RNA sequence: GGGAACGACUCGAGUAGAGUCGAAAAGAUAUGGAGUGUGAACUACGCUCCCAAAAAGGGCAACAGCACAGAGCUCGGAAACGAGCUCUGUGACAUGCCUACAAAGGGAGCGCACACUCCUAAGUCAGUUCUUUAUAGUGUUCGCACUAUAAAGAACAAAAGAAACAACAACAACAAC
Reactivity to DMS in 0.01 (KOAc 150mM, MgCl2 10mM, bicine 150mM(pH8.5), 24C), signal-to-noise 6, nucleotides 027 to 126: g000a030u010a300u020g000g000a030g020u000g020u000g000a140a080c190u020a300c020g010c010u000c000c000c000a010a050a100a150a080g010g000g010c010a070a110c290a170g010c000a010c000a000g000a010g020c000u000c000g010g000a040a070a180c010g000a030g010c000u000c000u000g010u000g010a020c090a220u010g000c000c000u000a060c230a050a140a180g000g010g010a000g010c000g000c020a010c010a000c000u000c000c000u000a020a060g000u000c020a160
Reactivity to 2A3 in 0.01 (KOAc 150mM, MgCl2 10mM, bicine 150mM(pH8.5), 24C), signal-to-noise 5, nucleotides 027 to 126: g050a030u100a050u170g000g010a020g000u010g000u010g010a030a020c030u160a050c220g000c000u040c000c000c000a020a200a020a090a130g110g000g010c090a300a110c080a300g030c000a020c010a000g000a000g000c000u000c020g050g020a060a060a030c000g000a000g000c000u000c000u000g000u000g000a000c000a000u050g000c000c010u040a030c110a010a150a010g020g000g000a000g000c000g000c000a000c000a000c000u000c000c000u000a020a000g030u010c040a020